[RMDB]
RNA sequence: GGGAACGACUCGAGUAGAGUCGAAAAAUUGCAGACCGGUGAUGAAACUGUUCUAGGAAGUGCCGUCUUAGAAACAAUGAUUAUGAAUUGGACGCUGAGGUCAAAAACCGCCAGCUUCGGCUGGCGGGAUCAAAUAAGUGUUCGCACUUAUUUGAUCAAAAGAAACAACAACAACAAC
Reactivity to 2A3 in 0.01 (KOAc 150mM, MgCl2 10mM, bicine 150mM(pH8.5), 24C), signal-to-noise 2, nucleotides 027 to 126: a010u060u080g010c020a010g020a070c010c060g060g000u080g010a110u050g010a120a000a000c050u040g040u060u020c010u050a040g070g050a080a030g050u030g130c010c040g060u010c000u030u050a020g020a060a080a000c010a010a100u110g020a060u110u190a090u240g130a130a090u090u060g030g010a010c010g000c060u040g080a050g030g000u040c010a000a030a030a140a070c010c000g040c000c010a000g000c000u040u090c090g120g020c010u030g000g040c000g000g000
Reactivity to DMS in 0.01 (KOAc 150mM, MgCl2 10mM, bicine 150mM(pH8.5), 24C), signal-to-noise 3, nucleotides 027 to 126: a080u000u010g010c050a100g010a090c030c020g010g030u010g000a100u010g000a070a100a100c060u000g010u010u000c010u000a050g010g000a040a070g020u000g000c070c060g000u010c010u000u010a030g000a070a060a040c060a030a050u000g000a100u010u000a090u010g000a130a120u010u000g010g030a080c080g000c060u000g000a080g010g010u000c040a050a050a050a090a240c000c010g010c000c000a000g000c000u000u010c170g030g000c020u000g000g000c010g010g000
Chemical mapping of a 177-nucleotide RNA with 2A3 and DMS. For DMS the reverse transcriptase was MarathonRT. Values cover nucleotides 27 to 126. It was measured as part of the RMDB library RFMREP.